[RMDB]
The record gives the reactivity of an RNA of 177 nucleotides to DMS and 2A3. 2A3 adducts were read by reverse transcription with SuperScript II with manganese. Values cover nucleotides 27 to 126. The data come from the RNA Mapping Database (RMDB), library OK2TRN. For DMS the reverse transcriptase was MarathonRT.
RNA sequence: GGGAACGACUCGAGUAGAGUCGAAAAAAAUCGACAAGCUUGCCUAGUGAAAUUAUGAAAUUUGGUCCAGUUUUAAUUUGCGUACCCACGAGAGUAUUGGCCAACGCAUUACAUGAUUCAUACAUGGAUCAUAUGAGCAGUUCGCUGCUCAUAUGAUAAAAGAAACAACAACAACAAC
Reactivity to DMS in 0.01 (KOAc 150mM, MgCl2 10mM, bicine 150mM(pH8.5), 24C), signal-to-noise 4, nucleotides 027 to 126: a040a070a070u010c020g010a070c050a080a110g000c040u000u000g010c060c020u000a110g010u000g010a070a070a120u000u000a040u000g000a080a050a080u000u000u000g000g000u000c020c050a080g010u000u010u010u010a040a120u010u010u010g010c030g010u010a110c130c020c120a080c110g000a120g000a100g020u000a090u000u000g000g000c030c040a040a030c190g010c080a030u000u020a090c040a020u000g010a090u000u000c050a050u010a070c080a040u000g000g000
Reactivity to 2A3 in 0.01 (KOAc 150mM, MgCl2 10mM, bicine 150mM(pH8.5), 24C), signal-to-noise 2, nucleotides 027 to 126: a000a000a000u100c040g010a020c040a150a010g020c010u040u050g000c030c030u070a050g030u020g230a080a110a040u160u080a080u110g080a090a140a080u070u050u050g030g010u060c010c030a010g040u000u090u060u110a090a120u050u120u110g020c010g000u060a060c000c000c000a000c020g120a120g000a010g120u110a100u170u200g040g000c000c000a020a010c040g020c050a010u120u020a050c030a050u050g030a050u090u090c030a020u050a160c040a030u040g090g000